RNA sequence: GGGAACGACUCGAGUAGAGUCGAAAAACGAGUCGUACGCGACUCGAAUGGUAUUGUCGGCGUAAAAGAACAAGACGUCACCGGCCGCGACCGGGCUAAAAAGCGAAACGUCAUCUACGGAUGACGAAAAACGGACCUGGGUUCGCCCAGGUCCGAAGUUUUACUAUCCCUUCGGGGAUAGUAAAACAAAAGAAACAACAACAACAAC
Reactivity to 2A3 in 0.01 (KOAc 150mM, MgCl2 10mM, bicine 150mM(pH8.5), 24C), signal-to-noise 1, nucleotides 027 to 156: a000c020g010a000g000u010c010g010u020a050c260g010c000g150a000c010u030c000g010a000a080u050g020g060u140a180u170u240g110u100c060g050g000c020g020u060a030a130a030a090g130a070a060c060a120a000g100a110c000g000u020c000a000c010c010g050g000c040c000g000c000g010a020c010c000g000g000g000c010u050a020a020a020a020a000g000c020g060a050a050a030c000g000u000c000a000u010c010u020a040c130g090g000a000u000g000a010c010g110a110a000a000a000a030c000g020g000a010c000c000u060g000g000g000u020u050c070g100c000c000c000a000g000g010u030c000c000g010a000a000
Structure probing data (2A3) for a 207-nucleotide construct. Reactivities are given for positions 27 through 156. For 2A3 the reverse transcriptase was SuperScript II with manganese. It was measured as part of the RMDB library M2RFPK. As a SHAPE reagent, 2A3 marks flexible, mostly unpaired nucleotides at the ribose 2'-OH. The 2A3 profile rests on 652 reads. The RNA was probed in 150 mM KOAc, 10 mM MgCl2 and 150 mM bicine (pH 8.5) at 24 C.